[RMDB]
RNA sequence: GGGAACGACUCGAGUAGAGUCGAAAAAUUCCCAUUAUACUACCACUUUUUCAAUCUCCAGAGGAAGUGGCUAUGCUUGUGGGAUAGAGGAAAAUGUUGCCACGGUCUGAAGGAAAAGGUUGAUUGUACACUUUUAUUUGUUCGCAAAUAAAAGUGUAAAAGAAACAACAACAACAAC
Reactivity to 2A3 in 0.01 (KOAc 150mM, MgCl2 10mM, bicine 150mM(pH8.5), 24C), signal-to-noise 5, nucleotides 027 to 126: a020u060u030c000c000c030a020u140u150a030u010a020c020u040a040c020c040a080c040u000u060u050u060u070c020a040a060u030c060u020c040c020a010g000a020g040g060a060a020g020u010g000g000c000u090a090u110g030c020u080u100g020u130g090g110g060a100u150a160g060a070g060g120a040a060a060a080u240g030u130u090g030c020c010a040c010g010g160u000c020u040g050a050a020g070g060a070a080a030a000g090g000u010u020g080a210u020u080g060u010
Reactivity to DMS in 0.01 (KOAc 150mM, MgCl2 10mM, bicine 150mM(pH8.5), 24C), signal-to-noise 2, nucleotides 027 to 126: a250u010u000c020c000c010a160u040u030a130u020a120c110u010a090c040c030a040c030u000u000u020u010u010c030a060a080u010c050u000c060c050a050g000a200g000g030a090a080g000u010g010g010c070u010a070u030g000c060u000u000g000u010g010g000g000a130u020a090g000a080g000g010a100a040a070a090u010g000u000u000g010c000c010a060c040g030g010u000c040u000g000a190a130g010g000a060a030a110a050g000g010u000u000g010a120u010u030g020u010
Background: Conditions: 150 mM KOAc, 10 mM MgCl2 and 150 mM bicine (pH 8.5), 24 C. An RNA of 177 nucleotides, treated with 2A3 and DMS and read out base by base. High DMS reactivity at an A or C suggests that its Watson-Crick edge is free. 2A3 adducts were read by reverse transcription with SuperScript II with manganese. Values cover nucleotides 27 to 126. Source: RMDB libraries RFM100 and RFMREP, as collected in RNAgym.